Conditions: 150 mM KOAc, 10 mM MgCl2 and 150 mM bicine (pH 8.5), 24 C.
An RNA of 177 nucleotides, treated with DMS and read out base by base.
The DMS profile rests on 1,108 reads.

[RMDB]
RNA sequence: GGGAACGACUCGAGUAGAGUCGAAAAGAUAUGGAAAGCUUCUCCCAAUCACACUAUUUCAACAGCACCUGGGUCGGAAACGACCCGGUGACAUGAAACGUGUGAUUGGGAGAAGCUUUCCUAAGUCGAAUAAGUUCCUGUUCGCAGGAACUUAUUCAAAAGAAACAACAACAACAAC
Reactivity to DMS in 0.01 (KOAc 150mM, MgCl2 10mM, bicine 150mM(pH8.5), 24C), signal-to-noise 1, nucleotides 027 to 126: g000a110u000a300u030g000g000a000a000a000g010c000u000u000c000u000c010c020c010a000a020u000c010a030c000a000c010u000a300u010u000u010c020a030a120c260a190g000c010a000c020c000u030g070g000g020u000c000g030g000a090a080a170c010g000a030c000c000c000g010g010u010g020a010c060a210u000g000a000a010a030c300g000u000g010u000g000a010u000u000g050g000g020a000g010a000a000g000c000u000u000u000c000c010u000a030a090g000u010c140
Values cover nucleotides 27 to 126. DMS (dimethyl sulfate) methylates the pairing face of unpaired adenines and cytosines.